[RMDB]
RNA sequence: GGGAACGACUCGAGUAGAGUCGAAAAAGCAUGUUAGGUUCGCAUGGUGCACUAUUGUGUUAUUAGUAACUAAGUAAGCUUACAAUCGAAAAUGUUUAACCAUAAAAGGGUAAAAAGGUGUAAGACAGAUACCCUCUGAGCUUCGGCUCAGAGGGAAGGUUUAAGAAUGGUUCGCCAUUCUUAAACCAAAAGAAACAACAACAACAAC
Reactivity to DMS in 0.01 (KOAc 150mM, MgCl2 10mM, bicine 150mM(pH8.5), 24C), signal-to-noise 2, nucleotides 027 to 156: a100g060c040a060u000g010u000u010a040g040g010u000u010c080g010c040a050u000g030g000u020g000c130a090c030u000a040u000u000g030u010g000u000u010a070u020u000a100g020u000a050a110c050u010a110a150g020u000a070a190g020c010u000u000a060c050a080a060u010c040g000a090a080a090a090u010g000u000u000u000a110a060c040c040a070u000a080a150a090a160g000g000g000u010a010a050a030a120a090g010g040u000g040u000a020a070g010a090c040a050g000a200u000a090c000c000c020u000c010u010g000a000g000c020u000u010c300g050g000c000u000c000a020g020a020g030g030g010a000a000
Reactivity to 2A3 in 0.01 (KOAc 150mM, MgCl2 10mM, bicine 150mM(pH8.5), 24C), signal-to-noise 3, nucleotides 027 to 156: a000g060c030a010u060g010u060u100a040g040g000u080u080c050g000c020a030u030g050g000u100g030c030a000c030u110a170u150u200g020u010g020u040u030a120u010u030a040g080u040a060a010c020u000a130a050g130u030a060a050g020c010u020u050a040c030a050a090u090c050g090a100a040a000a000u030g040u010u150u130a010a020c020c010a010u140a040a120a030a020g080g000g010u080a050a060a020a010a010g010g010u000g010u040a040a030g030a020c010a020g120a060u100a150c000c000c000u000c000u000g010a010g000c000u020u070c240g030g000c000u000c000a000g000a000g000g010g000a000a000